RNA sequence: GGGAACGACUCGAGUAGAGUCGAAAAGGGGUCUCCAAUGAUGUGAUAGACGCAUCGAUCCAUUGCAAUCGGUGUCUCCCUAUACUGAAGCCUCCACGGUAUAGGGAGACACCGAUUGCAAUGGGGAGCGUCUGUCAUUGAGGAGACGGAGGCACCCGAUUGUAAACAUGUUCGCAUGUUUACAAUCAAAAGAAACAACAACAACAAC
Reactivity to DMS in 0.01 (KOAc 150mM, MgCl2 10mM, bicine 150mM(pH8.5), 24C), signal-to-noise 2, nucleotides 027 to 156: g020g020g010g030u000c000u010c010c010a130a150u000g010a130u000g020u000g020a030u000a020g000a030c010g040c000a190u000c140g010a070u010c000c000a050u000u010g010c010a020a010u000c010g030g040u000g020u020c000u000c000c000c000u000a010u000a020c020u010g040a060a130g000c060c020u000c010c050a300c040g010g000u000a010u000a020g010g020g010a010g000a000c000a000c000c000g000a000u000u000g020c000a010a000u000g010g000g000g020a030g000c000g020u000c000u000g010u000c010a010u010u010g000a130g000g000a060g020a030c040g030g020a050g040g010c030a160c040c010c040
Structure probing data (DMS) for a 207-nucleotide construct. DMS adducts were read by reverse transcription with MarathonRT. The RNA was probed in 150 mM KOAc, 10 mM MgCl2 and 150 mM bicine (pH 8.5) at 24 C. Source: RMDB library RNAMAK, as collected in RNAgym.